[RMDB]
Conditions: 150 mM KOAc, 10 mM MgCl2 and 150 mM bicine (pH 8.5), 24 C. The record gives the reactivity of an RNA of 177 nucleotides to 2A3 and DMS. For 2A3 the reverse transcriptase was SuperScript II with manganese. Reactivities are given for positions 27 through 126. The 2A3 profile rests on 2,950 reads.
RNA sequence: GGGAACGACUCGAGUAGAGUCGAAAAAAUGAUGUUGUGAGGCUGACUUGCUUAGGAGCUUGUUCGUGUUCCUAAGCUCUUCACCCUUACAGACACCUUCAAAAACUUGACACCUUCGGGUGUCAAGCCAGUUUAUAGCGUUCGCGCUAUAAACUGGAAAAGAAACAACAACAACAAC
Reactivity to 2A3 in 0.01 (KOAc 150mM, MgCl2 10mM, bicine 150mM(pH8.5), 24C), signal-to-noise 3, nucleotides 027 to 126: a000a010u210g070a060u090g000u090u000g000u000g000a000g000g000c000u010g000a000c020u000u020g000c010u010u000a000g010g010a010g000c040u170u100g170u300u190c170g040u070g020u080u000c000c000u000a000a000g000c000u010c000u010u000c000a010c010c010c000u000u000a010c000a000g040a010c030a030c020c040u080u180c070a050a070a020a090a090c000u000u000g000a010c000a000c000c000u030u070c190g130g000g010u000g000u000c000a010a000g000
Reactivity to DMS in 0.01 (KOAc 150mM, MgCl2 10mM, bicine 150mM(pH8.5), 24C), signal-to-noise 2, nucleotides 027 to 126: a060a060u000g010a000u010g020u010u000g020u010g010a020g000g030c210u010g010a040c020u000u000g010c000u000u010a010g030g000a020g010c000u000u010g000u000u000c240g010u000g030u000u000c000c000u010a020a020g020c010u000c010u000u000c000a010c300c000c000u050u000a000c000a060g020a020c010a010c010c020u000u010c140a060a080a060a060a200c000u000u000g000a000c000a000c000c000u000u000c210g010g020g050u000g010u000c000a000a000g000